[RMDB]
RNA sequence: GGGAACGACUCGAGUAGAGUCGAAAAAAUGCCGCCUCAGUUCCAAGCUCUUUCGUGGCACUGUAAACAGUCCUAUUUAGUUAGGGGCAGUCAACCACGUUGCGAAGCUAAAUUAUCUGGUCGAGAGUUACGAUUCCCUACUUCGGUAGGGAAUCAAACUUGAAGACUGUUUCGACAGUCUUCAAGUAAAAGAAACAACAACAACAAC
Reactivity to 2A3 in 0.01 (KOAc 150mM, MgCl2 10mM, bicine 150mM(pH8.5), 24C), signal-to-noise 3, nucleotides 027 to 156: a000a020u090g040c040c020g020c020c020u080c010a050g020u110u040c050c000a050a020g000c010u020c010u010u050u060c030g000u020g000g000c100a010c040u000g050u060a060a110a130c030a080g070u080c010c000u000a040u080u160u060a240g150u050u030a020g010g000g040g000c000a000g000u010c010a000a060c010c010a010c020g020u020u040g050c130g090a060a010g010c010u040a080a110a080u190u140a080u060c060u050g040g000u020c050g030a020g000a020g170u140u040a070c070g000a000u000u000c000c000c000u000a000c000u000u030c100g060g010u000a000g000g000g060a000a000u000c000a000a000
Reactivity to DMS in 0.01 (KOAc 150mM, MgCl2 10mM, bicine 150mM(pH8.5), 24C), signal-to-noise 3, nucleotides 027 to 156: a070a080u000g000c020c030g020c010c000u010c020a100g020u000u000c030c050a180a300g000c020u000c010u000u000u000c000g010u020g020g020c040a040c000u020g000u000a030a110a050c050a170g000u000c000c020u010a030u010u010u010a210g010u000u000a030g000g000g000g030c000a010g000u000c020a050a020c010c020a050c030g010u010u000g020c110g030a100a090g010c020u000a060a050a060u000u000a090u010c030u000g030g010u000c020g000a130g000a170g010u010u000a080c090g010a040u000u000c000c010c000u010a010c010u000u000c260g050g020u000a010g030g010g000a000a000u000c000a010a030